Chemical mapping of a 177-nucleotide RNA with 2A3 and DMS. For 2A3 the reverse transcriptase was SuperScript II with manganese. Conditions: 150 mM KOAc, 10 mM MgCl2 and 150 mM bicine (pH 8.5), 24 C.
[RMDB]
RNA sequence: GGGAACGACUCGAGUAGAGUCGAAAAUGCUUAUCAGGAAACACAUACUGACACCAUGUAUGAUGUAAUUCCUAUUUAUCAAUGCAACAGCACAGGAAUAGGUUACGCCGUCUCGGAGUGGUACGGAAGUAGCUGUGAGGUUCGCCUCACAGCUACUAAAAGAAACAACAACAACAAC
Reactivity to 2A3 in 0.01 (KOAc 150mM, MgCl2 10mM, bicine 150mM(pH8.5), 24C), signal-to-noise 2, nucleotides 027 to 126: u030g000c010u110u130a030u210c100a030g090g050a030a080a000c010a000c000a040u030a020c020u090g100a090c040a080c110c090a080u180g050u020a020u040g300a130u010g080u020a030a130u030u080c010c020u040a090u040u080u040a110u040c060a060a120u130g030c080a020a060c040a210g000c010a000c050a040g010g100a110a040u170a050g000g060u000u060a040c080g010c020c000g030u020c010u000c030g090g050a120g080u220g020g010u030a040c050g000g000a030
Reactivity to DMS in 0.01 (KOAc 150mM, MgCl2 10mM, bicine 150mM(pH8.5), 24C), signal-to-noise 2, nucleotides 027 to 126: u040g010c050u030u000a040u000c140a080g030g020a000a090a060c040a040c040a040u000a010c000u000g000a160c180a150c190c130a070u000g000u000a000u000g010a090u010g000u000a020a090u000u020c000c000u000a090u010u020u000a040u010c160a100a110u020g000c050a070a070c140a110g070c010a020c110a200g000g000a040a050u010a000g020g000u000u000a070c040g000c050c040g000u000c020u000c050g000g000a050g030u000g020g030u000a040c140g010g010a130